[RMDB]
RNA sequence: GGGAACGACUCGAGUAGAGUCGAAAAGUGGACCACAUCACCAUGAAAGGACAGUUUAUUGCUUGUUUUGCCGGCUGCGAGGCCCUUGUGGACACUGGGACAUCAUGGAUCCUUGGCCCAAAAGCAACUGAGAACAAUAGUUCGCUAUUGUUCUCAGAAAAGAAACAACAACAACAAC
Reactivity to DMS in 0.01 (KOAc 150mM, MgCl2 10mM, bicine 150mM(pH8.5), 24C), signal-to-noise 7, nucleotides 027 to 126: g030u000g000g000a120c020c010a050c070a060u010c100a110c080c050a060u010g010a070a120a090g000g000a080c040a040g000u000u000u010a100u020u000g010c050u000u000g000u000u000u000u000g010c130c110g000g000c020u000g010c160g010a090g010g010c040c030c060u010u010g010u000g010g010a140c060a050c040u000g000g010g000a050c060a090u010c110a070u000g010g010a130u000c020c010u000u000g020g010c010c010c020a050a060a070a100g010c200a080a130
Reactivity to 2A3 in 0.01 (KOAc 150mM, MgCl2 10mM, bicine 150mM(pH8.5), 24C), signal-to-noise 4, nucleotides 027 to 126: g040u030g000g050a160c010c000a020c020a060u090c010a020c060c000a070u120g130a100a100a040g070g010a020c030a020g030u050u070u190a210u130u240g030c030u150u190g030u110u160u070u100g070c060c000g050g000c020u040g000c030g030a050g030g000c000c010c000u050u090g030u040g010g010a010c010a020c060u020g010g000g010a000c010a050u150c030a080u140g050g030a050u040c020c000u000u040g060g030c010c010c000a050a090a010a010g040c020a020a090